[RMDB]
RNA sequence: GGGAACGACUCGAGUAGAGUCGAAAAGAUAUGGAAACGGUGGAUGAGUGCGAAGAACUCGGAAACGAGGGAGCACCAUCGUAACAUCCGUUUCCUAAGUCAAAAGCGGCUACUUCGGUAGCCGCAACCUUACGUUUAUGUUCGCAUAAACGUAAGGAAAAGAAACAACAACAACAAC
Reactivity to 2A3 in 0.01 (KOAc 150mM, MgCl2 10mM, bicine 150mM(pH8.5), 24C), signal-to-noise 4, nucleotides 027 to 126: g020a010u070a020u120g000g030a010a020a000c010g000g020u020g030g000a010u010g040a130g190u000g000c020g120a300a020g020a100a020c000u000c010g010g010a070a050a010c010g000a000g010g000g010a030g000c010a000c010c000a000u010c000g000u050a040a000c020a220u080c000c000g000u000u000u000c010c000u000a040a010g040u010c020a000a000a070a180g000c000g000g000c010u010a000c000u060u130c300g110g000u020a000g010c080c010g000c000a000a010
Reactivity to DMS in 0.01 (KOAc 150mM, MgCl2 10mM, bicine 150mM(pH8.5), 24C), signal-to-noise 5, nucleotides 027 to 126: g000a030u000a300u000g000g000a010a010a010c000g010g020u000g000g000a010u000g000a100g030u000g010c010g010a110a160g000a060a160c010u010c000g020g000a110a110a190c010g010a030g000g000g010a120g000c000a010c000c000a000u000c000g000u000a020a050c170a020u010c010c000g000u000u000u010c000c000u000a010a080g000u000c050a090a060a110a130g010c000g020g010c000u000a000c000u000u010c190g000g000u000a000g020c000c000g000c000a010a010